[RMDB]
RNA sequence: GGGAACGACUCGAGUAGAGUCGAAAAUGUGGUCACGGGGGCUGUACGGGACGUUUCCGUGACUGGGCUUGUCUGCACCAUGUCGGUGUGAGUGCAGGAGCCGAGCAAUAACGACAGCAUCGACUGCGCCCGGAGAAUGUCUGGACGGUCUUUCAAGGUUAAUCUGAUUCUUCGGAAUCAGAUUAACAAAAGAAACAACAACAACAAC
Reactivity to 2A3 in 0.01 (KOAc 150mM, MgCl2 10mM, bicine 150mM(pH8.5), 24C), signal-to-noise 2, nucleotides 027 to 156: u250g050u110g070g000u000c000a000c000g020g020g020g000g000c060u060g050u250a060c060g030g120g100a000c020g000u000u000u000c000c000g000u000g000a000c000u000g000g010g020c010u030u010g030u060c000u000g000c020a010c010c000a010u040g020u010c020g010g040u010g000u020g040a050g000u010g020c000a000g000g010a010g000c000c010g010a020g000c070a040a200u080a150a010c020g030a010c060a060g030c000a050u020c000g020a010c000u030g050c050g000c040c010c000g030g010a030g050a120a230u210g040u110c010u040g000g040a020c000g020g050u050c040u050u100u070c100a090a050g130
Notes: This 207-nucleotide RNA was probed chemically with 2A3. The 2A3 profile rests on 1,444 reads.